[RMDB]
RNA sequence: GGGAACGACUCGAGUAGAGUCGAAAAAUGGUGAGGGAUUGCUCAGACCAGAUGGGAAGAAGUGAGACGAGCGGCAGCUGACGCCCAUGCCCUGUUCUGUGGCCCGUGACUGAGGUCCAGCCACACACGAAGUAUAGCAUUUCGAUGCUAUACUUCGAAAAGAAACAACAACAACAAC
Reactivity to 2A3 in 0.01 (KOAc 150mM, MgCl2 10mM, bicine 150mM(pH8.5), 24C), signal-to-noise 7, nucleotides 027 to 126: a000u100g000g020u070g020a100g050g080g050a150u060u170g050c010u010c040a020g060a090c020c020a030g040a130u070g020g030g000a020a040g020a040a010g060u080g040a070g010a060c070g030a030g060c080g040g000c010a020g010c030u030g010a020c030g020c010c000c000a010u060g020c010c000c020u050g080u140u040c060u060g010u030g010g000c040c080c120g050u130g010a010c020u040g050a040g100g040u000c010c000a000g000c010c000a010c000a000c000a000
Reactivity to DMS in 0.01 (KOAc 150mM, MgCl2 10mM, bicine 150mM(pH8.5), 24C), signal-to-noise 9, nucleotides 027 to 126: a090u010g010g020u000g010a110g010g000g000a110u010u010g010c040u000c060a070g000a140c060c040a070g000a070u000g010g010g000a080a050g010a140a070g000u010g000a130g010a100c090g010a070g020c070g010g010c060a150g010c050u000g020a110c200g000c030c020c030a080u000g000c040c020c030u000g020u000u000c080u000g010u010g000g010c020c090c160g010u020g010a030c030u010g010a130g030g010u000c010c040a160g000c020c010a010c040a050c210a140
Notes: Chemical mapping of a 177-nucleotide RNA with 2A3 and DMS. For DMS the reverse transcriptase was MarathonRT. Reactivities are rounded to 0.1 and cut off at 0 and 3. Reactivities are given for positions 27 through 126.